[RMDB]
RNA sequence: GGGAACGACUCGAGUAGAGUCGAAAAGAUAUGGACUCAGGAUCGAUAAGGAGCCAUCGGAAACGAUGGGCUCCUUUUGACGAUCAGCUGAGUCCUAAGUCAAACGCAUAUUGUUCGCAAUAUGCGACCUAUGCUGUUUGUUCGCAAACAGCAUAGGAAAAGAAACAACAACAACAAC
Reactivity to DMS in 0.01 (KOAc 150mM, MgCl2 10mM, bicine 150mM(pH8.5), 24C), signal-to-noise 5, nucleotides 027 to 126: g010a050u000a300u010g010g000a010c000u000c000a010g020g000a020u000c000g040a200u000a020a020g020g000a000g000c000c000a020u000c000g010g000a120a060a150c000g020a010u000g000g020g010c000u000c000c000u000u000u000u000g010a210c130g000a010u000c000a140g010c010u010g010a020g000u000c000c000u000a010a070g000u000c020a100a110a250c020g000c000a020u000a000u000u000g000u000u010c270g010c010a030a030u010a010u000g010c000g000a060
Reactivity to 2A3 in 0.01 (KOAc 150mM, MgCl2 10mM, bicine 150mM(pH8.5), 24C), signal-to-noise 1, nucleotides 027 to 126: g020a000u060a020u150g020g010a000c000u010c010a010g020g050a000u000c020g060a090u060a260a020g010g000a010g020c000c000a000u000c000g010g020a130a060a030c000g020a000u030g040g030g020c000u020c000c000u010u000u020u010g010a010c000g000a000u000c050a080g160c010u000g010a000g000u000c000c000u000a030a000g020u010c030a070a050a100c030g000c020a000u010a010u010u050g050u120u100c300g000c180a020a010u000a010u020g010c000g000a030
Record summary:
An RNA of 177 nucleotides, treated with DMS and 2A3 and read out base by base. Values cover nucleotides 27 to 126. For 2A3, 7,932 sequencing reads were counted. Source: RMDB library TTRDES, as collected in RNAgym. DMS (dimethyl sulfate) methylates the pairing face of unpaired adenines and cytosines. As a SHAPE reagent, 2A3 marks flexible, mostly unpaired nucleotides at the ribose 2'-OH. For DMS the reverse transcriptase was MarathonRT.